[RMDB]
RNA sequence: GGGAACGACUCGAGUAGAGUCGAAAAGAAUAAAGCACUUGUAUCCAGACUAUAUGAAGAACUCUCAAAACUCCAUAAUGAGACGGGACACAGAACAACUAAAAAAUGAGCAAAAAUCUUUUGGCAGAUGUCUCACCAAAGAAAAUGAACAUCAUUACAUAGUCCUAUACUUCGGUAUAGGACUAUGAAAAGAAACAACAACAACAAC
Reactivity to DMS in 0.01 (KOAc 150mM, MgCl2 10mM, bicine 150mM(pH8.5), 24C), signal-to-noise 1, nucleotides 027 to 156: g010a180a100u000a130a060a160g090c070a080c000u000u050g000u000a060u000c000c010a120g000a060c030u010a090u000a060u000g000a150a070g010a080a170c060u000c050u000c030a020a050a070a260c060u000c000c010a080u000a060a180u000g000a120g020a130c090g000g000g030a100c010a040c000a050g020a070a130c040a040a140c020u000a000a020a060a020a030a050u000g000a090g030c100a010a130a140a180a170u000c000u000u000u000u000g030g050c010a060g020a080u000g020u020c010u010c030a080c070c030a000a030a100g000a070a100a070a180u000g020a030a010c060a020u010c020a070u000u020a140
Reactivity to 2A3 in 0.01 (KOAc 150mM, MgCl2 10mM, bicine 150mM(pH8.5), 24C), signal-to-noise 1, nucleotides 027 to 156: g020a060a000u060a080a070a000g000c050a000c020u030u050g080u050a030u020c030c030a000g000a020c060u050a050u010a060u200g020a020a040g080a020a020c000u010c000u000c030a000a040a000a090c010u060c060c090a060u030a120a060u040g010a010g010a020c080g030g050g050a000c020a000c040a050g150a070a000c020a000a010c000u250a010a020a050a090a000a030u300g020a020g060c070a200a010a000a000a000u090c030u000u080u010u000g000g050c040a010g010a110u030g070u010c000u010c080a020c020c020a070a180a000g050a050a110a050a020u200g000a000a110c010a050u150c010a000u060u120a040

The record gives the reactivity of an RNA of 207 nucleotides to DMS and 2A3. For DMS the reverse transcriptase was MarathonRT. The DMS profile rests on 1,295 reads.